The record gives the reactivity of an RNA of 207 nucleotides to DMS and 2A3. Conditions: 150 mM KOAc, 10 mM MgCl2 and 150 mM bicine (pH 8.5), 24 C. Source: RMDB library ARCHII, as collected in RNAgym. The 2A3 profile rests on 971 reads.
[RMDB]
RNA sequence: GGGAACGACUCGAGUAGAGUCGAAAAAUCGCCUUUGCGAGAGCCGAAAACUUGAGGGCGGUUUUAAAUUCUGUCGCCCAUUCUCAAGUUUUGUGUAGACAUUUCGUCCUUUGGGGUAAGAUGGAGGAGGAACCUUUUUUGUAAGAAAAAGACAAACCUACAUUAGGAACUUCGGUUCCUAAUGUAGAAAAGAAACAACAACAACAAC
Reactivity to DMS in 0.01 (KOAc 150mM, MgCl2 10mM, bicine 150mM(pH8.5), 24C), signal-to-noise 1, nucleotides 027 to 156: a090u000c030g000c010c090u010u000u010g020c050g080a250g030a110g030c000c010g010a080a060a000a030c000u010u010g030a020g010g010g020c010g020g030u000u000u010u010a000a090a240u000u010c130u000g000u000c030g040c020c000c000a180u000u000c090u000c010a010a090g010u000u000u000u000g040u010g040u000a160g020a080c040a110u000u010u000c090g010u000c060c030u000u000u000g030g080g040g020u010a060a100g010a060u010g020g000a040g000g010a090g010g010a060a080c070c010u000u000u000u000u000u000g000u010a090a200g000a030a030a020a070a050g010a090c060a050a050a110c160
Reactivity to 2A3 in 0.01 (KOAc 150mM, MgCl2 10mM, bicine 150mM(pH8.5), 24C), signal-to-noise 2, nucleotides 027 to 156: a010u030c040g040c030c030u080u100u130g000c030g010a030g010a010g080c010c010g010a000a000a000a030c010u020u010g020a060g010g000g000c000g000g010u070u110u030u150a050a020a060u190u050c060u080g090u040c000g000c020c030c030a070u300u120c010u000c030a010a010g000u000u020u040u040g070u050g060u050a050g020a030c030a000u070u170u050c130g030u060c000c000u100u040u120g040g000g000g000u070a070a050g020a080u060g010g000a010g010g020a030g010g030a030a040c000c000u030u030u000u010u090u070g030u030a100a040g050a040a050a020a010a010g060a030c100a020a110a020c060